An RNA of 177 nucleotides, treated with 2A3 and DMS and read out base by base.

RNA sequence: GGGAACGACUCGAGUAGAGUCGAAAAGAUAUGGAUUGAGCUGGUAGUACUAUGAAGAGCUUCGGAAACGAAGCUUGGAGUACGAACAGCAAUGAUGUCCUAAGUCAAACGCAGCUUCGGCUGCGAAGGUUAUCAGUUAGUUCGCUAACUGAUAACCAAAAGAAACAACAACAACAAC
Reactivity to 2A3 in 0.01 (KOAc 150mM, MgCl2 10mM, bicine 150mM(pH8.5), 24C), signal-to-noise 4, nucleotides 027 to 126: g020a010u050a010u120g010g000a010u030u170g150a110g040c010u010g040g020u080a040g000u000a010c010u060a280u300g040a030a020g010a000g000c000u010u010c010g010g000a020a040a020c000g000a010a000g000c000u000u000g000g000a000g000u000a000c010g030a160a010c010a000g020c010a010a050u140g040a080u200g010u000c000c000u010a070a010g040u020c040a110a040a080c030g000c000a010g000c000u100u150c300g180g000c000u020g000c000g010a020a020
Reactivity to DMS in 0.01 (KOAc 150mM, MgCl2 10mM, bicine 150mM(pH8.5), 24C), signal-to-noise 6, nucleotides 027 to 126: g000a040u000a250u010g010g010a020u000u000g020a150g010c000u000g000g000u000a260g000u000a000c010u000a230u020g020a140a160g000a010g000c000u000u000c000g000g000a060a050a110c010g010a010a010g010c000u000u000g000g000a000g030u000a000c000g010a070a300c010a010g030c000a120a090u000g030a120u000g000u010c000c000u000a040a130g000u000c020a080a090a210c030g010c000a000g000c010u000u010c220g010g010c000u000g000c000g000a020a030
Overview:
In probing experiments dimethyl sulfate is read out at A N1 and C N3, which are open when not base-paired. The reactions ran in a buffer of 150 mM KOAc, 10 mM MgCl2 and 150 mM bicine (pH 8.5), at 24 C. For 2A3 the reverse transcriptase was SuperScript II with manganese.